Structure probing data (DMS) for a 177-nucleotide construct.
It was measured as part of the RMDB library OK2TRN.
[RMDB]
RNA sequence: GGGAACGACUCGAGUAGAGUCGAAAAGGACCCAGCGCAGUGCGGCCACCUGGUCCAGGUGACCCCAGUUUCCCCGGCUGUGUUCGUCUCCUGUGCUGUGAGUAAGAGAACAGGGUGGGGUGGGAGCAUUAGACGCUCAUUUCGAUGAGCGUCUAAUAAAAGAAACAACAACAACAAC
Reactivity to DMS in 0.01 (KOAc 150mM, MgCl2 10mM, bicine 150mM(pH8.5), 24C), signal-to-noise 2, nucleotides 027 to 126: g010g010a150c030c030c010a050g020c010g020c030a040g010u000g000c180g010g000c030c010a060c010c030u000g010g020u010c170c070a060g030g000u010g010a090c010c030c040c070a100g020u010u000u010c020c030c010c060g070g000c060u000g000u010g010u000u000c100g010u010c020u000c090c010u010g030u020g050c040u000g020u000g040a090g000u000a080a080g010a160g010a040a060c080a100g000g000g000u010g030g010g000g040u010g010g010g000a100g010c120
Values cover nucleotides 27 to 126. The RNA was probed in 150 mM KOAc, 10 mM MgCl2 and 150 mM bicine (pH 8.5) at 24 C. For DMS the reverse transcriptase was MarathonRT.